[RMDB]
RNA sequence: GGGAACGACUCGAGUAGAGUCGAAAAGGGUCCAGAUGCGCGGCGAGAUUGCCCAGCUGCAGCGGAGGCUGGGUACCACCACCGUCUACGUCACCCACGACCAGACCGAGGCAAUGACGCUGGGCGAAACGUACCAUUACUUCGGUAAUGGUACGUUAAAAGAAACAACAACAACAAC
Reactivity to DMS in 0.01 (KOAc 150mM, MgCl2 10mM, bicine 150mM(pH8.5), 24C), signal-to-noise 4, nucleotides 027 to 126: g000g000g010u000c040c060a090g000a080u000g010c110g050c030g010g040c020g030a100g010a110u000u010g010c000c000c020a010g010c010u020g020c010a090g020c070g020g010a250g000g010c020u010g010g000g000u010a030c080c100a110c060c050a080c040c050g000u000c040u010a110c090g000u000c050a060c040c020c010a160c090g000a120c030c040a060g000a090c040c020g000a280g000g000c060a050a090u000g000a070c060g010c040u010g000g010g010c010g000a040
Reactivity to 2A3 in 0.01 (KOAc 150mM, MgCl2 10mM, bicine 150mM(pH8.5), 24C), signal-to-noise 2, nucleotides 027 to 126: g070g010g010u020c030c000a010g010a100u120g000c060g000c000g010g000c040g010a050g010a120u070u150g000c030c000c000a000g010c020u050g000c010a050g040c020g040g040a020g000g000c020u000g000g010g030u010a030c010c030a030c010c000a060c040c040g030u010c080u100a060c030g040u020c030a030c000c000c030a020c020g070a090c010c040a040g040a040c030c010g000a040g040g000c010a060a120u080g010a030c090g010c040u000g000g000g020c000g010a040